[RMDB]
RNA sequence: GGGAACGACUCGAGUAGAGUCGAAAAUCGAUACGGGGAUUGGUGAAACAUUCAAUGCCAGAAUUGCCGGCAACAUUUCUAAUGACGAUUUGUUAGGUAGCCUGGAGUUUGCUUGUGCUGCUGCGGGCUAGACUGAUCUAUUCGUAGAUCAGUCUAGAAAAGAAACAACAACAACAAC
Reactivity to DMS in 0.01 (KOAc 150mM, MgCl2 10mM, bicine 150mM(pH8.5), 24C), signal-to-noise 9, nucleotides 027 to 126: u010c050g010a110u010a090c120g010g010g010g010a100u000u010g010g010u000g000a120a090a100c100a070u000u000c060a040a060u000g010c010c020a060g000a080a080u000u000g010c040c020g010g010c110a040a060c030a030u000u000u000c030u000a110a120u010g010a100c220g010a050u000u000u000g010u000u000a070g020g020u010a050g010c050c010u000g000g000a050g010u000u010u000g010c020u010u000g020u010g000c040u000g010c020u000g010c030g000g000g010
Reactivity to 2A3 in 0.01 (KOAc 150mM, MgCl2 10mM, bicine 150mM(pH8.5), 24C), signal-to-noise 6, nucleotides 027 to 126: u080c010g010a010u050a100c050g010g000g000g030a040u030u050g010g020u020g040a090a070a010c010a030u090u090c030a070a050u060g030c000c000a010g070a050a080u090u070g030c030c010g080g020c040a020a010c010a040u050u080u010c040u080a220a150u200g090a060c070g020a040u000u010u070g050u020u060a050g000g020u030a020g000c010c000u010g060g020a040g040u150u230u090g040c020u130u170g080u180g080c020u010g000c010u030g060c020g000g000g000